This 177-nucleotide RNA was probed chemically with 2A3 and DMS.
The data come from the RNA Mapping Database (RMDB), library OK2TST.
The DMS profile rests on 1,864 reads.
Conditions: 150 mM KOAc, 10 mM MgCl2 and 150 mM bicine (pH 8.5), 24 C.
RNA sequence: GGGAACGACUCGAGUAGAGUCGAAAAAUUUACUGCUGGCGAACUCGAUAGCUUCGUCCCAGGAAACCGCUUCCAGCUUGCCGCCUUUUUGGCGACGGAUCAUCGGCUGUUUUAAGCGUGGCGUCAGCGGUGAUUGCUAGUUCGCUAGCAAUCACCGAAAAGAAACAACAACAACAAC
Reactivity to 2A3 in 0.01 (KOAc 150mM, MgCl2 10mM, bicine 150mM(pH8.5), 24C), signal-to-noise 2, nucleotides 027 to 126: a000u080u100u140a110c060u110g100c030u050g020g000c000g010a050a030c010u030c070g010a090u070a110g080c000u080u050c020g020u010c000c000c000a030g000g090a060a010a010c030c000g000c040u050u000c020c030a030g010c000u010u130g020c010c000g020c000c000u190u240u040u160u300g020g040c010g010a010c010g040g030a090u140c030a060u080c060g070g000c010u020g030u100u080u030u150a030a020g080c050g010u050g080g000c030g030u090c020a010g020
Reactivity to DMS in 0.01 (KOAc 150mM, MgCl2 10mM, bicine 150mM(pH8.5), 24C), signal-to-noise 2, nucleotides 027 to 126: a110u020u010u010a120c110u000g020c040u000g010g000c000g020a160a080c080u000c120g020a110u000a090g040c110u000u000c060g020u000c010c060c020a160g000g000a020a090a070c110c050g000c040u000u010c300c040a040g020c050u000u010g030c010c020g020c010c010u000u000u000u000u000g050g030c010g030a000c020g010g010a070u020c140a100u010c120g000g030c000u000g000u010u020u010u000a050a050g020c030g020u000g000g020c080g010u000c060a030g030